[RMDB]
RNA sequence: GGGAACGACUCGAGUAGAGUCGAAAAGAUAUGGAACGCCAGAAAGCUACCCACCGCAUGAACUACAAGGAGAAGUAUCGGAAACGAUACGUAACUUGCAUGCGAGGCUUUCUGGCGUUCCUAAGUCCUAGGAAUGAAAGUUCGCUUUCAUUCCUAGAAAAGAAACAACAACAACAAC
Reactivity to DMS in 0.01 (KOAc 150mM, MgCl2 10mM, bicine 150mM(pH8.5), 24C), signal-to-noise 5, nucleotides 027 to 126: g000a070u010a300u010g000g000a010a000c010g030c010c000a010g010a010a010a010g020c020u000a080c060c030c080a300c120c000g000c000a000u000g000a060a040c100u010a300c010a010a010g000g010a090g010a110a240g000u000a000u000c000g010g000a170a090a240c010g000a010u000a000c000g000u000a030a290c000u000u010g000c000a010u010g010c000g010a100g000g010c000u000u000u000c010u000g000g010c010g000u000u000c000c000u010a010a090g000u000c040
Reactivity to 2A3 in 0.01 (KOAc 150mM, MgCl2 10mM, bicine 150mM(pH8.5), 24C), signal-to-noise 1, nucleotides 027 to 126: g020a040u090a010u110g010g000a000a000c000g000c010c000a010g020a000a010a000g020c030u110a160c020c000c050a030c050c020g000c010a010u030g000a110a080c060u190a090c300a000a020g060g030a050g050a060a000g000u000a000u010c030g030g020a110a070a040c010g000a000u010a000c010g000u000a010a030c000u010u020g000c000a000u020g000c010g000a010g000g000c000u020u020u000c000u000g000g030c030g000u020u000c000c000u000a000a000g010u000c000